[RMDB]
RNA sequence: GGGAACGACUCGAGUAGAGUCGAAAACUCCCUGAUAGGGCUUAGGCAUCUUUCAGCCCUUGCUUCGGGUUUUCGUCCUUAUUGGCCUCCCUCAUUGGGCCUCAGAAGCUUCACAGAACAUUGACUUCUACUCAAUCUUGUUCGCAAGAUUGAGUAGAAAAGAAACAACAACAACAAC
Reactivity to 2A3 in 0.01 (KOAc 150mM, MgCl2 10mM, bicine 150mM(pH8.5), 24C), signal-to-noise 4, nucleotides 027 to 126: c030u030c010c000c010u030g060a080u060a100g030g000g040c030u060u030a040g050g000c040a160u070c100u040u130u040c040a020g000c000c000c020u000u070g010c000u040u070c040g000g000g000u040u020u020u080c050g070u050c020c000u060u140a160u060u130g030g000c000c010u030c050c000c020u070c000a070u060u290g060g030g000c000c000u000c000a090g040a080a000g010c000u060u110c070a140c010a080g100a110a030c030a080u040u080g060a050c040u010u000